[RMDB]
RNA sequence: GGGAACGACUCGAGUAGAGUCGAAAAAAGCCAGCCCAGUCCCGGCGGCCCGUUUGAUUGGAGGCUGCCCGAUCUCGUGGGAGCCAGCCUCGAUUCGCUGCUCACCAGGGUGGCCAGGCUGGAGGCCUCAGUGCAUGGGAUUCGUCCCAUGCACUGAAAAAGAAACAACAACAACAAC
Reactivity to DMS in 0.01 (KOAc 150mM, MgCl2 10mM, bicine 150mM(pH8.5), 24C), signal-to-noise 1, nucleotides 027 to 126: a070a070g010c010c000a060g030c200c000c020a050g000u010c020c060c060g000g020c010g000g000c020c000c030g000u010u010u000g030a090u000u000g030g010a050g030g020c000u000g020c050c000c020g000a090u010c100u010c100g000u020g000g010g010a190g010c230c030a000g020c010c020u000c100g030a100u000u010c140g030c040u000g000c040u010c030a060c090c130a130g010g020g030u000g010g040c010c050a010g000g000c000u010g020g010a070g030g000c010c040
Reactivity to 2A3 in 0.01 (KOAc 150mM, MgCl2 10mM, bicine 150mM(pH8.5), 24C), signal-to-noise 1, nucleotides 027 to 126: a000a010g100c010c000a000g000c030c000c010a030g130u150c060c050c050g040g000c000g010g020c040c010c000g000u020u170u250g180a110u020u100g140g020a040g010g010c010u030g010c000c030c000g090a100u060c030u030c120g110u190g020g010g010a010g050c080c030a000g020c000c000u050c070g000a110u130u020c060g050c030u100g000c020u050c090a130c110c100a080g000g060g000u020g170g000c000c030a010g020g040c000u020g010g010a020g030g010c030c020